[RMDB]
RNA sequence: GGGAACGACUCGAGUAGAGUCGAAAAAGAGGUCUUUGAACUUGCCGAUCGUGCCCCCGUGGAACAGCCAGUAGGCCCCGGGCACGGCGCAGAAAAGUAUCAGUGGCGGCUGGACGAGCGCGGUGAACGUUCUCACUUACUUCGGUAAGUGAGAACGAAAAGAAACAACAACAACAAC
Reactivity to DMS in 0.01 (KOAc 150mM, MgCl2 10mM, bicine 150mM(pH8.5), 24C), signal-to-noise 1, nucleotides 027 to 126: a120g040a150g010g000u000c000u000u000u010g050a090a080c050u000u000g050c090c090g040a120u000c010g000u010g020c000c010c040c110c160g000u000g010g000a170a100c150a190g000c020c060a190g000u000a060g040g000c000c040c000c060g000g010g020c040a010c030g020g000c040g010c060a030g000a070a050a060a060g010u020a080u020c050a090g020u000g010g010c060g000g010c060u020g000g000a070c090g010a090g000c090g000c030g030g030u000g000a120a160
Reactivity to 2A3 in 0.01 (KOAc 150mM, MgCl2 10mM, bicine 150mM(pH8.5), 24C), signal-to-noise 1, nucleotides 027 to 126: a000g220a090g120g020u070c100u050u100u100g060a070a100c010u050u070g100c070c010g180a300u080c020g010u020g000c000c000c020c060c060g140u240g040g010a190a080c000a060g010c010c000a040g070u130a230g140g020c030c000c000c000g030g000g010c000a000c020g020g000c000g000c030a000g090a080a180a010a010g070u090a080u160c080a020g080u050g020g000c000g000g000c020u070g070g030a050c000g050a020g020c040g040c000g010g000u080g000a100a040
Conditions: 150 mM KOAc, 10 mM MgCl2 and 150 mM bicine (pH 8.5), 24 C. The record gives the reactivity of an RNA of 177 nucleotides to DMS and 2A3. For DMS the reverse transcriptase was MarathonRT. 2A3 adducts were read by reverse transcription with SuperScript II with manganese. It was measured as part of the RMDB library OK2TST.